[RMDB]
RNA sequence: GGGAACGACUCGAGUAGAGUCGAAAAGCAAUCAUACUUCUUCUCGAAGAGAACGCGAGCAAGCGCCAGCGUGUGCGUCAGGUUGCAUUCGUCGUGAUACGCUGCGCAACAUGCGUUCGCGCUGACAGCUAGUCGUCGGAUUCGUCCGACGACUAGCAAAAGAAACAACAACAACAAC
Reactivity to 2A3 in 0.01 (KOAc 150mM, MgCl2 10mM, bicine 150mM(pH8.5), 24C), signal-to-noise 1, nucleotides 027 to 126: g070c030a030a120u120c030a060u130a170c020u020u030c020u110u010c000u010c140g010a020a000g030a020g000a040a020c000g030c000g050a040g000c090a080a070g010c010g010c060c060a010g000c000g000u020g010u030g000c000g010u030c110a160g080g090u120u150g090c070a060u130u060c080g000u000c000g050u040g170a010u000a020c000g020c040u000g000c010g040c000a010a010c020a040u150g000c020g000u030u000c000g000c000g000c020u030g020a020c040a040
Reactivity to DMS in 0.01 (KOAc 150mM, MgCl2 10mM, bicine 150mM(pH8.5), 24C), signal-to-noise 1, nucleotides 027 to 126: g010c050a160a070u000c130a080u010a180c050u000u000c090u000u010c090u000c000g030a000a070g000a210g000a070a040c100g000c010g000a030g050c080a110a130g000c050g000c190c010a010g000c000g000u010g020u000g020c010g000u010c080a060g010g020u010u010g000c110a140u010u000c090g020u000c000g060u000g000a020u000a050c000g030c080u000g030c030g010c030a060a070c110a030u020g000c030g010u000u000c050g020c120g030c020u000g000a070c160a090